[RMDB]
RNA sequence: GGGAACGACUCGAGUAGAGUCGAAAAAUAGCACGCAGCUGCCAAUUCAGAGGAUGGCUUUCGCUGCAGCCAGCUAAUUAGCAGCAGGGAGCAUAGGCAUUCGCUUCCUUCUUCUGGGCGAUGAGGCGGGUGGAUGGCUAUUCGUAGCCAUCCACCCAAAAGAAACAACAACAACAAC
Reactivity to 2A3 in 0.01 (KOAc 150mM, MgCl2 10mM, bicine 150mM(pH8.5), 24C), signal-to-noise 2, nucleotides 027 to 126: a000u120a000g040c050a040c100g060c020a020g020c000u120g010c010c030a040a250u210u140c020a060g020a020g160g000a060u070g010g000c000u050u000u070c020g000c010u000g000c020a040g000c000c020a060g010c000u010a060a300u300u230a110g000c020a000g000c000a000g000g030g060a000g020c020a070u110a270g160g040c010a080u150u120c050g000c000u000u000c000c000u020u020c010u000u000c060u010g010g040g010c020g020a110u210g020a040g000g110c040

The record gives the reactivity of an RNA of 177 nucleotides to 2A3. Values are in units of 0.01, from 0 to 300, in steps of 10.